[RMDB]
RNA sequence: GGGAACGACUCGAGUAGAGUCGAAAAGAUAUGGAAUGCAGACAUGCCUGGCUUCGGAAACGAAGCACAGGCAACAGCUGUGCAUUCCUAAGUCAAACAAAGAGCCAGGUUCGCCUGGCUCUUUGAAGUUAAAGACAGCGUUCGCGCUGUCUUUAACAAAAGAAACAACAACAACAAC
Reactivity to DMS in 0.01 (KOAc 150mM, MgCl2 10mM, bicine 150mM(pH8.5), 24C), signal-to-noise 2, nucleotides 027 to 126: g000a030u000a300u010g000g000a020a000u010g010c000a020g010a040c120a110u000g040c000c000u010g010g000c000u000u010c010g020g000a100a020a150c000g020a020a000g010c000a050c000a000g000g000c020a020a020c190a130g000c070u000g000u000g020c000a000u000u000c000c000u010a040a070g000u000c010a120a150a300c010a000a010a010g010a020g030c030c000a020g010g010u000u020c270g010c010c000u010g000g010c000u000c000u010u000u000g000a070a190

The data come from the RNA Mapping Database (RMDB), library TTRDEL. Chemical mapping of a 177-nucleotide RNA with DMS. The DMS profile rests on 1,460 reads. The reactions ran in a buffer of 150 mM KOAc, 10 mM MgCl2 and 150 mM bicine (pH 8.5), at 24 C. Reactivities are rounded to 0.1 and cut off at 0 and 3.